Chemical mapping of a 177-nucleotide RNA with DMS and 2A3. Conditions: 150 mM KOAc, 10 mM MgCl2 and 150 mM bicine (pH 8.5), 24 C. The data come from the RNA Mapping Database (RMDB), library M2PK50. For 2A3 the reverse transcriptase was SuperScript II with manganese. The DMS profile rests on 2,591 reads.
[RMDB]
RNA sequence: GGGAACGACUCGAGUAGAGUCGAAAACGAGAGCGAUUCGUCGCUCUCGAAAGAGUGCACGGCAGCACAAGAAAAGCCGAAGAAAAGCAGAGCCGACUGCAAAAACUCCCAUGUUCGCAUGGGAGAACUUAUUAAGGACGUUCGCGUCCUUAAUAAGAAAAGAAACAACAACAACAAC
Reactivity to DMS in 0.01 (KOAc 150mM, MgCl2 10mM, bicine 150mM(pH8.5), 24C), signal-to-noise 3, nucleotides 027 to 126: c010g010a010g010a010g020c000g000a010u000u010c170g030u000c010g010c000u000c000u000c010g000a060a070a130g000a100g030u010g000c020a070c000g010g010c020a240g020c020a020c030a090a170g020a110a090a110a130g010c020c010g000a150a140g010a090a040a110a110g000c020a010g000a140g010c050c130g020a200c010u000g000c020a050a030a060a120a130c000u000c000c000c000a010u000g010u010u010c170g020c000a010u000g000g010g000a010g000a010a040
Reactivity to 2A3 in 0.01 (KOAc 150mM, MgCl2 10mM, bicine 150mM(pH8.5), 24C), signal-to-noise 2, nucleotides 027 to 126: c010g000a000g000a010g010c010g000a010u020u040c160g080u000c000g090c010u000c000u010c000g010a000a000a010g070a010g010u020g030c040a020c110g020g000c000a050g050c000a020c070a070a010g090a010a070a000a000g010c030c050g020a080a040g090a100a180a020a020g000c010a000g020a040g100c030c090g150a130c010u000g000c020a030a020a030a080a140c000u010c000c000c000a010u000g020u020u060c240g000c100a000u010g000g000g000a010g000a000a000